[RMDB]
RNA sequence: GGGAACGACUCGAGUAGAGUCGAAAAUCACUAAAAGCUUAGCGAUGAUGCUAGCGAUGCUUAAAGGGGUGUAGUAUUCGGCGUAUUUCCCUCCGCCGGCGUUAUUGUAAUCUUUGAGUAAGUAUUCAUCACAGGGUAGAUUCGUCUACCCUGUGAUAAAAGAAACAACAACAACAAC
Reactivity to DMS in 0.01 (KOAc 150mM, MgCl2 10mM, bicine 150mM(pH8.5), 24C), signal-to-noise 3, nucleotides 027 to 126: u010c080a080c080u020a050a110a080a120g020c070u000u010a080g020c010g010a140u000g020a110u010g010c020u000a090g010c030g000a130u000g020c030u000u000a020a060a110g020g000g020g030u000g000u010a030g010u000a100u010u000c020g000g030c000g000u000a090u000u020u000c010c000c000u010c280c010g010c010c010g020g020c300g000u000u000a000u010u010g010u000a040a070u010c030u000u000u000g010a070g010u000a060a120g010u000a090u000u010c090